[RMDB]
RNA sequence: GGGAACGACUCGAGUAGAGUCGAAAAGGUCGGGAAUAGCCACGGGAAACUGUGGGUAAUGCCCGAUGAUCUGGUGACAGCAAAGGUGUGAUUCCGCCAGAGGAGCAGCCUGUGUGGUAUUAGCUUGCAAAUCACUACUGUUCGCAGUAGUGAUUUGAAAAGAAACAACAACAACAAC
Reactivity to 2A3 in 0.01 (KOAc 150mM, MgCl2 10mM, bicine 150mM(pH8.5), 24C), signal-to-noise 2, nucleotides 027 to 126: g110g000u010c010g010g000g010a020a040u020a070g090c010c000a010c010g000g000g000a030a070a030c010u020g010u070g010g030g020u020a020a010u160g050c000c000c000g010a010u010g020a020u000c030u050g040g020u010g070a050c050a050g070c050a110a100a060g070g040u090g060u050g090a160u130u050c020c020g050c030c010a050g050a100g090g010a030g020c040a010g000c000c000u070g040u050g010u050g070g030u090a140u130u100a050g040c020u010u040g030
Reactivity to DMS in 0.01 (KOAc 150mM, MgCl2 10mM, bicine 150mM(pH8.5), 24C), signal-to-noise 5, nucleotides 027 to 126: g010g020u000c000g020g000g000a060a050u000a180g000c010c000a010c020g000g010g010a140a110a170c010u000g010u000g000g000g000u000a110a090u010g000c000c000c000g000a020u000g000a080u000c020u000g010g010u020g010a100c120a130g010c100a060a070a060g010g010u010g000u000g000a150u000u010c050c010g010c060c080a060g010a090g010g010a060g010c070a100g000c040c020u000g000u000g020u010g010g020u000a090u010u000a130g000c030u000u000g010

Background: Structure probing data (2A3 and DMS) for a 177-nucleotide construct. Reactivities are given for positions 27 through 126. The reactions ran in a buffer of 150 mM KOAc, 10 mM MgCl2 and 150 mM bicine (pH 8.5), at 24 C. Source: RMDB library RFMREP, as collected in RNAgym.